[RMDB]
RNA sequence: GGGAACGACUCGAGUAGAGUCGAAAAGCUAUUAAAUGGUACUCUUGUCAGAUAUGUUAUGAGGACUGACUGGCCAUUCGUCAGCUCCAGAUGGACAUUUCUUUUAUGCCUAUCCAUUACUUUUGUCCACUUAACCCUCCUUCUGCUUUGACUAUCAUGCGACAACAGUAUUCGUACUGUUGUCGCAAAAAGAAACAACAACAACAAC
Reactivity to 2A3 in 0.01 (KOAc 150mM, MgCl2 10mM, bicine 150mM(pH8.5), 24C), signal-to-noise 1, nucleotides 027 to 156: g010c030u040a000u190u050a110a260a050u050g050g000u050a050c050u070c100u190u160g050u160c050a040g040a090u040a110u190g150u170u110a120u230g040a110g050g010a000c000u000g050a080c030u100g000g030c000c020a050u030u120c020g190u160c010a010g080c050u030c020c020a020g060a140u120g050g020a000c050a090u040u130u060c070u090u190u070u060a180u140g020c020c020u100a080u090c010c000a000u110u080a150c110u020u030u180u020g020u040c000c000a060c080u040u030a030a030c000c000c000u000c070c030u060u120c020u040g140c130u150u050u050g000a060c050u040a030u170c100a000

The record gives the reactivity of an RNA of 207 nucleotides to 2A3. For 2A3 the reverse transcriptase was SuperScript II with manganese. The 2A3 profile rests on 330 reads. The reactions ran in a buffer of 150 mM KOAc, 10 mM MgCl2 and 150 mM bicine (pH 8.5), at 24 C.